[RMDB]
RNA sequence: GGGAACGACUCGAGUAGAGUCGAAAAACAUGCUCUGCCAUUACAUCAGCAUAAUACUCUAUGUAUGAAGAUGGAAUAAUCACUUGAACAAUUUCAGCAUCUUUUAAAACAUAUUCCAUAUCAUCACACAACGACACGAGUUCGCUCGUGUCGUUGUAAAAGAAACAACAACAACAAC
Reactivity to 2A3 in 0.01 (KOAc 150mM, MgCl2 10mM, bicine 150mM(pH8.5), 24C), signal-to-noise 1, nucleotides 027 to 126: a010c020a040u120g000c000u020c030u030g040c000c010a050u040u040a020c030a110u050c070a020g000c010a050u050a090a030u150a170c110u040c050u120a070u230g060u050a030u090g010a040a000g020a020u000g000g170a040a010u130a070a050u060c020a100c090u110u070g050a120a010c040a130a210u040u130u080c040a000g020c010a080u010c130u000u210u230u290a100a240a020a020c000a000u100a040u050u070c010c020a020u080a020u100c010a030u080c030a030c000
Source information
Source: RMDB library OK2TRN, as collected in RNAgym. The record gives the reactivity of an RNA of 177 nucleotides to 2A3. For 2A3 the reverse transcriptase was SuperScript II with manganese. For 2A3, 494 sequencing reads were counted.